Chemical mapping of a 177-nucleotide RNA with 2A3 and DMS. The data come from the RNA Mapping Database (RMDB), library OK2TRN. For DMS, 137,982 sequencing reads were counted. For 2A3 the reverse transcriptase was SuperScript II with manganese. The 2A3 profile rests on 88,492 reads.
RNA sequence: GGGAACGACUCGAGUAGAGUCGAAAAGGGACGAGUUGGAUUUUUUCCGUGAGAACGGAAGGGGUCUAGCUCAAUGGCGUGUUGUUAGAAUUUCGGUGAGAGCUAAGUUCCGAAGAGUACGCCAUGACUACAGCUAAGUAUUCGUACUUGGUUGUAGAAAAGAAACAACAACAACAAC
Reactivity to 2A3 in 0.01 (KOAc 150mM, MgCl2 10mM, bicine 150mM(pH8.5), 24C), signal-to-noise 8, nucleotides 027 to 126: g090g010g060a040c060g000a020g000u010u000g010g010a020u000u000u000u010u010u000c000c000g000u010g030a080g020a030a000c000g000g000a000a000g000g000g000g000u000c010u010a000g000c000u000c010a020a020u000g000g000c010g000u030g030u020u060g150u030u030a050g020a110a070u020u030u070c100g000g010u020g030a120g000a010g020c050u050a030a010g040u070u010c010c010g010a020a010g020a010g040u020a000c000g000c000c010a010u040g040a010
Reactivity to DMS in 0.01 (KOAc 150mM, MgCl2 10mM, bicine 150mM(pH8.5), 24C), signal-to-noise 9, nucleotides 027 to 126: g010g010g010a130c160g010a010g020u000u000g010g000a000u000u000u000u000u000u000c000c000g010u000g000a270g000a210a010c000g000g000a010a000g000g000g000g000u000c000u000a010g010c000u000c000a110a030u000g000g010c010g020u000g000u000u000g000u000u000a120g000a040a030u000u000u000c130g050g010u000g000a210g000a200g010c030u000a010a040g010u000u000c010c050g010a040a050g000a070g010u000a010c010g010c000c000a010u000g000a240